[RMDB]
RNA sequence: GGGAACGACUCGAGUAGAGUCGAAAAAGAGGACACAACCGUCAACCAAGCGGUCAAUGAGGAGUCGCAGCCUGAGCCCGAAGAGUUUGAUGAAAAGUCGGAGACAGACGACAAGCAGGAGACAAUACGCAGGUAUUAAUUUCGAUUAAUACCUGCGAAAAGAAACAACAACAACAAC
Reactivity to 2A3 in 0.01 (KOAc 150mM, MgCl2 10mM, bicine 150mM(pH8.5), 24C), signal-to-noise 2, nucleotides 027 to 126: a000g060a010g010g010a020c010a000c000a100a090c020c010g030u000c000a070a070c040c020a080a030g030c000g020g050u050c020a000a120u180g010a020g110g010a030g030u050c020g000c040a000g030c000c020u010g030a000g060c040c000c000g020a000a010g040a010g070u090u080u170g100a090u060g040a030a100a000a060g060u040c000g000g000a030g020a030c020a030g060a000c020g000a010c000a000a000g010c000a010g020g040a020g020a000c040a080a000u110a060
Reactivity to DMS in 0.01 (KOAc 150mM, MgCl2 10mM, bicine 150mM(pH8.5), 24C), signal-to-noise 4, nucleotides 027 to 126: a090g020a090g000g010a100c080a080c120a110a060c040c040g000u000c050a110a200c110c120a120a170g000c050g000g010u000c060a090a080u020g010a080g030g000a100g010u010c090g020c030a050g010c050c010u010g000a100g040c030c020c020g010a060a060g000a060g000u010u000u000g000a130u010g010a080a050a100a120g000u000c040g000g000a120g010a080c100a060g010a080c050g010a040c080a020a100g010c060a040g000g000a050g000a040c100a060a090u010a110
An RNA of 177 nucleotides, treated with 2A3 and DMS and read out base by base. DMS adducts were read by reverse transcription with MarathonRT. The data come from the RNA Mapping Database (RMDB), library OK2TST. The reactions ran in a buffer of 150 mM KOAc, 10 mM MgCl2 and 150 mM bicine (pH 8.5), at 24 C.